Overview
Structure probing data (DMS and 2A3) for a 207-nucleotide construct. For 2A3, 3,960 sequencing reads were counted.
RNA sequence: GGGAACGACUCGAGUAGAGUCGAAAAUGACCUCUUCGGAGGUCACGCUACCUUUGUGGUGUGUCGCUAGUGGGAGCGUUAGACUCCCAUUGGGAGUCGAAGCGCGAAGAACACUAAAAGUCACACCACUCUGGUUUAUGACGUACUUCGGUACGUCCUCAGUCCUACUGUUCGCAGUAGGACUGAGAAAAGAAACAACAACAACAAC
Reactivity to DMS in 0.01 (KOAc 150mM, MgCl2 10mM, bicine 150mM(pH8.5), 24C), signal-to-noise 1, nucleotides 027 to 156: u000g010a000c010c010u010c000u000u040c300g030g000a000g000g000u000c000a000c000g000c060u000a090c020c000u000u000u000g040u010g010g000u000g030u000g040u010c040g040c150u000a030g040u010g000g000g030a200g000c010g020u000u000a300g070a050c000u000c010c000c010a120u000u000g030g030g000a060g000u000c010g020a140a260g000c000g040c000g030a050a090g010a190a180c010a040c050u000a000a050a050a100g020u000c000a000c010a010c000c010a000c010u010c010u000g020g000u000u000u000a040u000g010a050c000g030u010a010c010u000u010c300g000g010u010a000c000g000u000c000
Reactivity to 2A3 in 0.01 (KOAc 150mM, MgCl2 10mM, bicine 150mM(pH8.5), 24C), signal-to-noise 3, nucleotides 027 to 156: u050g000a000c010c020u000c020u040u040c200g160g000a000g000g000u000c000a010c030g060c020u060a010c000c000u040u010u020g000u010g000g040u010g010u010g010u020c010g070c170u030a010g000u000g000g000g020a050g000c020g050u210u000a000g000a000c000u000c010c000c050a090u040u050g000g010g000a010g000u000c010g010a070a000g000c010g000c000g100a130a020g010a040a000c000a000c000u030a060a060a020a090g010u000c000a000c000a000c000c000a000c010u000c010u010g000g040u040u080u150a200u190g010a000c000g000u000a000c010u020u090c160g020g000u010a000c000g000u000c000
Notes: The RNA was probed in 150 mM KOAc, 10 mM MgCl2 and 150 mM bicine (pH 8.5) at 24 C. Source: RMDB library RNAMAK, as collected in RNAgym.